The record gives the reactivity of an RNA of 177 nucleotides to 2A3 and DMS. High DMS reactivity at an A or C suggests that its Watson-Crick edge is free. For DMS the reverse transcriptase was MarathonRT. Reactivities are given for positions 27 through 126. The RNA was probed in 150 mM KOAc, 10 mM MgCl2 and 150 mM bicine (pH 8.5) at 24 C.

[RMDB]
RNA sequence: GGGAACGACUCGAGUAGAGUCGAAAAGAUGAGAAUACGUGACUUGGUCAGAGGCGGAAAGCCACAAGCACGAACGAUUCAGUAGAGUAUCGACCCGCCAACAGAUGCACGUUGUGAUCGUGCUAGACACUAAUGAUGCAUUCGUGCAUCAUUAGUGAAAAGAAACAACAACAACAAC
Reactivity to 2A3 in 0.01 (KOAc 150mM, MgCl2 10mM, bicine 150mM(pH8.5), 24C), signal-to-noise 9, nucleotides 027 to 126: g090a070u280g040a030g060a170a060u150a080c010g010u010g110a210c010u010u010g020g040u160c170a070g020a120g190g000c020g050g210a300a050a020g010c010c000a020c010a010a010g000c010a000c010g010a070a020c010g010a010u010u020c010a010g030u050a020g020a000g010u060a060u110c000g010a050c010c000c000g050c040c020a140a110c050a070g090a100u200g020c000a000c020g060u130u140g140u160g180a130u180c010g000u010g000c000u030a030g020a020
Reactivity to DMS in 0.01 (KOAc 150mM, MgCl2 10mM, bicine 150mM(pH8.5), 24C), signal-to-noise 7, nucleotides 027 to 126: g010a130u020g010a130g000a170a100u010a080c020g020u000g010a100c000u000u000g000g000u020c170a120g010a130g030g000c010g000g030a110a100a150g000c000c000a110c030a030a010g020c000a010c010g000a100a110c030g010a050u000u010c020a100g000u020a140g000a070g010u010a030u030c030g010a250c020c000c000g010c190c110a080a060c120a110g010a090u050g010c040a050c050g010u010u020g000u000g000a070u030c060g000u000g020c000u020a050g010a300